[RMDB]
RNA sequence: GGGAACGACUCGAGUAGAGUCGAAAAGAUAUGGAGCGAAGGUUCAGAGCUAAGAGUCGGAAACGACUCCUCUAGCGACGAAGAACUUCGCUCCUAAGUCAAACUGAGAAGGUUCGCCUUCUCAGAAGACCAAUAGUGUGUUCGCACACUAUUGGUCAAAAGAAACAACAACAACAAC
Reactivity to DMS in 0.01 (KOAc 150mM, MgCl2 10mM, bicine 150mM(pH8.5), 24C), signal-to-noise 3, nucleotides 027 to 126: g000a020u000a300u000g000g000a000g030c000g000a030a000g000g000u000u000c010a080g000a300g000c020u000a030a160g000a050g030u000c000g000g010a120a070a240c010g010a020c010u000c000c040u000c090u000a010g000c000g010a270c170g030a120a040g000a070a120c000u000u000c000g010c010u000c000c000u020a020a030g010u010c030a130a140a240c000u000g020a000g020a040a020g000g020u000u010c300g020c010c010u000u000c000u000c030a000g000a060a070
Reactivity to 2A3 in 0.01 (KOAc 150mM, MgCl2 10mM, bicine 150mM(pH8.5), 24C), signal-to-noise 2, nucleotides 027 to 126: g020a020u090a020u140g000g000a010g020c020g010a030a010g110g050u070u020c020a040g000a020g070c000u010a090a090g010a000g010u000c010g010g000a050a040a050c010g010a000c000u000c010c000u070c030u010a000g000c030g060a110c070g050a050a080g000a050a010c000u010u000c000g000c000u010c000c000u010a010a000g000u000c000a000a010a090c010u010g010a010g000a010a000g030g000u080u250c300g210c030c000u030u000c010u020c000a000g020a010a010
Description:
An RNA of 177 nucleotides, treated with DMS and 2A3 and read out base by base. For DMS the reverse transcriptase was MarathonRT. The data come from the RNA Mapping Database (RMDB), library TTRDES. DMS (dimethyl sulfate) methylates the pairing face of unpaired adenines and cytosines. The RNA was probed in 150 mM KOAc, 10 mM MgCl2 and 150 mM bicine (pH 8.5) at 24 C. 2A3 is a SHAPE reagent: it acylates the 2'-hydroxyl of flexible nucleotides of all four kinds. For DMS, 2,268 sequencing reads were counted.